This 207-nucleotide RNA was probed chemically with DMS and 2A3. Conditions: 150 mM KOAc, 10 mM MgCl2 and 150 mM bicine (pH 8.5), 24 C. It was measured as part of the RMDB library OK3TST. For DMS, 2,124 sequencing reads were counted. 2A3 adducts were read by reverse transcription with SuperScript II with manganese. For DMS the reverse transcriptase was MarathonRT.
[RMDB]
RNA sequence: GGGAACGACUCGAGUAGAGUCGAAAAAAGUUUAAGGAUAUGUCCUCAGUAGUAGAUCUGAACCAGGCAGAAACGAUGUGUCAAAAAUAUUUCUUGGUUAGUAAUUGGUGAGACAGGGCCUUAUGGUUUCCAAUUAUGGAGUCCUAGAAACUAAGUCUACCAUAUUUGUCUUCGGACAAAUAUGGUAAAAAGAAACAACAACAACAAC
Reactivity to DMS in 0.01 (KOAc 150mM, MgCl2 10mM, bicine 150mM(pH8.5), 24C), signal-to-noise 1, nucleotides 027 to 156: a060a090g010u010u000u000a130a060g020g000a170u010a090u000g020u000c010c070u010c030a090g040u010a110g060u000a070g020a070u010c020u030g000a080a070c040c020a070g010g020c100a110g040a120a090a040c000g010a050u000g060u030g010u040c050a010a070a070a070a040u010a070u010u000u010c060u000u000g010g010u010u000a090g020u070a040a060u000u010g000g020u010g010a110g000a080c020a050g010g020g000c040c040u000u010a040u010g020g010u000u000u000c010c040a030a130u000u010a060u000g000g010a140g000u000c020c010u000a060g000a100a050a070c040u010a070a160g020u010c060
Reactivity to 2A3 in 0.01 (KOAc 150mM, MgCl2 10mM, bicine 150mM(pH8.5), 24C), signal-to-noise 1, nucleotides 027 to 156: a010a020g180u230u180u160a160a090g030g030a070u090a070u290g050u000c000c050u050c050a040g000u090a010g000u030a020g010a090u030c010u030g000a050a000c000c000a000g060g000c050a010g120a090a230a020c080g080a090u160g050u030g000u020c000a000a000a000a110a110u070a140u110u150u020c010u000u040g000g020u010u040a070g030u020a050a050u060u140g000g000u010g060a040g000a030c010a050g060g000g020c010c010u070u080a080u110g070g030u070u000u120c050c030a000a030u140u000a090u110g050g000a010g010u000c000c000u010a030g030a010a010a010c010u040a040a120g220u260c000